RNA sequence: GGGAACGACUCGAGUAGAGUCGAAAAAUGCGCUGGGGGCGUGGUGCCGUCGGCGGCACCUUGAUGACCUUCAAGACGUACAGCGUGGCCUAUCUUGAGCUGAUGCAUCGCUUGUGGAAUCAGGGUGGGCCUAACUCCAUUUCGAUGGAGUUAGGCCAAAAGAAACAACAACAACAAC
Reactivity to 2A3 in 0.01 (KOAc 150mM, MgCl2 10mM, bicine 150mM(pH8.5), 24C), signal-to-noise 1, nucleotides 027 to 126: a000u060g020c010g000c020u020g000g010g010g060g030c010g000u190g060g190u270g120c000c160g300u120c010g020g020c000g000g000c000a000c000c000u020u010g000a030u020g160a150c000c020u030u070c050a080a120g070a230c020g030u110a060c070a070g050c000g040u050g000g090c000c000u210a240u190c120u130u110g020a010g010c020u050g200a040u020g010c000a020u020c000g000c070u040u050g020u020g020g020a050a010u000c000a000g080g000g000u030g020